[RMDB]
RNA sequence: GGGAACGACUCGAGUAGAGUCGAAAAGAGAUGAGUCUCAACACAUCUGAAUGUGUUGUACAUACCGUUCUGACUACGAUAUGUACGGUGUGUACAGUUACACAACGAGACUCAUCGUAGUCAGAUAGCUAGAGCUAGAUUUCGAUCUAGCUCUAGCAAAAGAAACAACAACAACAAC
Reactivity to DMS in 0.01 (KOAc 150mM, MgCl2 10mM, bicine 150mM(pH8.5), 24C), signal-to-noise 3, nucleotides 027 to 126: g020a150g000a020u020g000a010g010u000c000u000c010a040a020c030a020c080a030u020c260u050g000a130a090u000g020u020g000u000u000g020u000a000c000a000u000a010c030c000g010u000u020c010u010g000a030c020u000a050c080g000a150u020a020u030g010u000a000c000g000g030u000g000u000g020u000a020c150a100g010u050u020a020c030a020c080a030a040c080g000a020g000a000c000u000c010a010u000c000g010u000a020g020u000c020a020g000a120u050a070
Reactivity to 2A3 in 0.01 (KOAc 150mM, MgCl2 10mM, bicine 150mM(pH8.5), 24C), signal-to-noise 3, nucleotides 027 to 126: g060a020g000a020u010g000a000g000u000c000u000c000a010a010c010a000c000a020u060c120u300g100a180a050u010g000u000g000u000u030g000u000a000c000a000u000a000c030c010g040u060u050c010u030g040a030c010u060a030c070g060a010u030a020u080g030u010a000c000g000g000u010g000u000g000u000a010c020a020g010u060u090a010c020a000c010a060a050c050g000a000g000a000c000u000c000a000u000c000g000u000a000g010u000c010a010g000a040u010a000
An RNA of 177 nucleotides, treated with DMS and 2A3 and read out base by base. The data come from the RNA Mapping Database (RMDB), library OK1LIB. Values cover nucleotides 27 to 126. For 2A3, 3,479 sequencing reads were counted. For 2A3 the reverse transcriptase was SuperScript II with manganese.